RNA sequence: GGGAACGACUCGAGUAGAGUCGAAAAACGCGCCGUUCGCGGCGCGUAAAAAGAUAUGGAUCGAACUACCAGACAAUGUUAGGCGUUGAAAUCGGAAACGAUGGAGCCUAAUGAUCUGGCGAUCCUAAGUCAAAAAACACUUGCUUCGGCAAGUGAAGCAAGUAAAUCGUUUCGACGAUUUACUUGCAAAAGAAACAACAACAACAAC
Reactivity to 2A3 in 0.01 (KOAc 150mM, MgCl2 10mM, bicine 150mM(pH8.5), 24C), signal-to-noise 1, nucleotides 027 to 156: a000c030g000c010g000c050c000g030u050u090c200g060c020g200g050c300g040c000g010u040a000a000a030a000a000g050a020u100a000u080g000g000a000u000c000g030a070a060c080u040a050c250c000a010g020a000c030a040a020u080g010u050u000a000g020g000c040g100u220u040g030a090a080a000u010c010g000g040a100a050a050c020g020a000u020g030g030a000g000c090c000u100a000a010u090g000a000u000c000u020g000g000c010g000a000u000c010c000u000a090a000g010u000c060a040a040a000a280a000a000c000a000c060u040u010g000c000u050u010c190g150g000c030a010a010g000u010g010a010a010